[RMDB]
Chemical mapping of a 207-nucleotide RNA with 2A3 and DMS. 2A3 adducts were read by reverse transcription with SuperScript II with manganese. The reactions ran in a buffer of 150 mM KOAc, 10 mM MgCl2 and 150 mM bicine (pH 8.5), at 24 C. Values cover nucleotides 27 to 156.
RNA sequence: GGGAACGACUCGAGUAGAGUCGAAAAGCUGAAAUUGUAAGGGAAAUUUUUGAUUUAUCCUAUAAAGGCUAUGGAUUUAAGAAAAUAGCGAAUAUCCUAAACGAUAAAGGCACAUAUACGAAGUUUGGCCAGUUAUGGUCGCAUACAACUGUAGGGACACUUGCUGUGUUUUCGAACACAGCAAGUGAAAAGAAACAACAACAACAAC
Reactivity to 2A3 in 0.01 (KOAc 150mM, MgCl2 10mM, bicine 150mM(pH8.5), 24C), signal-to-noise 2, nucleotides 027 to 156: g000c010u030g050a040a130a020u060u070g010u170a100a130g040g000g020a020a050a060u130u140u020u080u050g030a070u100u080u090a060u130c000c010u060a070u100a150a090a020g040g000c020u000a010u050g000g000a000u000u100u300a080a010g010a020a120a090a070u090a050g020c040g040a060a000u060a030u090c000c010u020a070a000a030c020g020a010u030a080a060a000g000g000c060a060c040a060u110a000u010a020c080g020a030a010g010u080u160u070g030g000c010c000a030g010u070u070a080u110g010g000u010c000g010c040a030u140a120c060a150a020c020u030g010u100a000g020g030g020a010
Reactivity to DMS in 0.01 (KOAc 150mM, MgCl2 10mM, bicine 150mM(pH8.5), 24C), signal-to-noise 1, nucleotides 027 to 156: g030c040u020g010a060a220a010u020u010g030u010a080a300g000g030g010a020a060a150u010u000u000u000u020g010a110u000u000u010a060u000c040c010u010a130u000a060a040a040g050g000c030u000a130u030g030g050a160u000u000u000a030a220g000a020a050a030a120u000a020g030c000g030a100a110u000a090u000c000c000u000a040a140a110c010g010a070u000a090a100a120g020g000c030a020c130a040u000a030u000a110c060g000a050a020g000u000u000u000g010g130c010c000a110g020u000u000a120u020g040g030u010c050g020c090a060u000a060c020a040a090c020u000g000u000a030g050g000g020a210